This 207-nucleotide RNA was probed chemically with DMS and 2A3. For DMS the reverse transcriptase was MarathonRT. The DMS profile rests on 1,984 reads. The reactions ran in a buffer of 150 mM KOAc, 10 mM MgCl2 and 150 mM bicine (pH 8.5), at 24 C.

RNA sequence: GGGAACGACUCGAGUAGAGUCGAAAACGGAUGCAUUAAAACCAUUCGAGCUAGUCAAUGCGUGGCGUGUCUCUCCGCAGCGUGUUGGCGAAUGUAAAGAGUGACUAAGCAUGUAGUACCGAGGAUGAUAAGAGCAAUUCGUUCGCGAAUUGCUCAAGCUACGUCAAUUGUUCGCAAUUGACGUAGCAAAAGAAACAACAACAACAAC
Reactivity to DMS in 0.01 (KOAc 150mM, MgCl2 10mM, bicine 150mM(pH8.5), 24C), signal-to-noise 1, nucleotides 027 to 156: c050g010g020a080u000g000c030a140u010u020a010a130a060a160c100c000a130u000u010c020g010a240g000c050u000a130g000u010c000a030a010u000g050c000g050u010g010g050c000g000u040g020u010c070u000c020u020c210c010g000c010a030g000c020g000u000g020u000u000g040g000c010g020a090a050u000g000u010a050a120a210g010a100g030u010g000a090c010u000a120a180g000c070a070u000g050u000a100g000u000a080c080c000g000a130g010g010a130u000g010a120u000a080a150g010a040g050c010a030a020u000u000c000g040u000u000c300g000c000g000a040a020u000u000g020c000u010c010a000a070
Reactivity to 2A3 in 0.01 (KOAc 150mM, MgCl2 10mM, bicine 150mM(pH8.5), 24C), signal-to-noise 3, nucleotides 027 to 156: c020g000g010a000u010g010c020a020u070u190a000a000a040a100c020c020a010u030u020c020g020a050g020c050u040a020g010u010c000a010a020u010g010c000g000u060g100g000c030g020u100g030u010c040u000c000u000c070c010g000c000a020g010c000g000u020g010u000u000g030g000c000g010a040a010u060g020u070a060a050a050g010a010g010u010g010a030c070u030a100a000g080c020a020u040g060u100a030g040u030a100c020c060g010a050g100g040a030u160g020a030u130a260a110g000a010g010c000a000a000u000u000c000g000u040u030c150g000c000g100a000a000u000u000g000c010u000c000a010a000